[RMDB]
RNA sequence: GGGAACGACUCGAGUAGAGUCGAAAAGAUAUGGACCCGAUAAGUACGAUCUCCAACAGCUCGGAAACGAGACAUGGAGUAGUACUUUUGACGGGUCCUAAGUCAAAGUCGGUGUUCGCACCGACAAUCCUUAAACUCCCUUCGGGGAGUUUAAGGAAAAAGAAACAACAACAACAAC
Reactivity to 2A3 in 0.01 (KOAc 150mM, MgCl2 10mM, bicine 150mM(pH8.5), 24C), signal-to-noise 1, nucleotides 027 to 126: g030a030u090a030u230g000g000a010c000c020c050g010a060u000a030a010g000u010a000c030g020a140u240c000u000c000c020a080a090c050a160g010c010u000c000g020g050a120a020a010c020g000a000g050a030c020a120u150g000g000a000g000u000a000g000u000a000c020u050u000u020u040g130a040c020g020g000g020u000c000c010u000a030a040g000u000c030a070a080a040g010u020c000g030g040u030g000u040u100c300g000c090a000c000c000g000a000c000a000a000
Reactivity to DMS in 0.01 (KOAc 150mM, MgCl2 10mM, bicine 150mM(pH8.5), 24C), signal-to-noise 2, nucleotides 027 to 126: g000a040u000a300u010g000g010a000c000c000c000g050a170u000a000a000g000u000a000c000g010a130u020c000u000c000c040a020a040c250a180g010c020u000c000g000g000a090a090a270c000g020a030g010a010c070a240u000g000g000a030g010u000a160g020u000a000c000u000u000u000u000g020a090c120g000g010g030u010c010c010u010a000a050g000u000c010a110a090a080g000u000c010g010g000u000g000u000u010c230g020c010a030c000c020g030a010c000a020a010
The data come from the RNA Mapping Database (RMDB), library TTRDEL.
Structure probing data (2A3 and DMS) for a 177-nucleotide construct.
For 2A3 the reverse transcriptase was SuperScript II with manganese.
The 2A3 profile rests on 1,769 reads.
For DMS the reverse transcriptase was MarathonRT.